[RMDB]
RNA sequence: GGGAACGACUCGAGUAGAGUCGAAAACAUCAUCAGCAGAUCCAUUUACGGCAAUAGCAUUAGCUUCAAGUUUUAUUGAUACAGAUGAACACCAUCCAAUUAGCCGCUCAAUGUCGGUAAUGUAUUGCAAAGCCUACGCUUUCGAGCGUAGGCUUUGAAAAGAAACAACAACAACAAC
Reactivity to DMS in 0.01 (KOAc 150mM, MgCl2 10mM, bicine 150mM(pH8.5), 24C), signal-to-noise 1, nucleotides 027 to 126: c100a040u000c040a070u000c090a100g000c060a090g000a000u050c010c010a110u000u000u070a190c140g000g000c060a070a000u000a040g070c010a000u010u080a110g000c080u000u040c110a020a150g000u000u000u070u060a050u010u010g000a050u010a040c220a050g050a000u060g080a000a090c000a140c020c020a030u000c000c000a100a090u000u070a110g060c000c090g020c080u000c120a000a000u000g000u060c050g020g000u010a080a070u000g000u060a010u000u000g000
Reactivity to 2A3 in 0.01 (KOAc 150mM, MgCl2 10mM, bicine 150mM(pH8.5), 24C), signal-to-noise 2, nucleotides 027 to 126: c040a020u090c000a030u010c000a020g020c030a010g000a060u000c030c020a020u040u130u030a060c070g060g000c020a040a010u100a180g010c010a050u280u000a000g040c040u060u010c050a030a150g050u110u000u070u160a030u000u070g050a020u000a110c030a060g000a020u110g110a110a000c050a040c050c000a030u040c020c000a000a050u020u040a200g050c040c010g000c000u020c020a000a230u020g080u090c000g000g000u020a020a050u020g040u000a070u050u090g160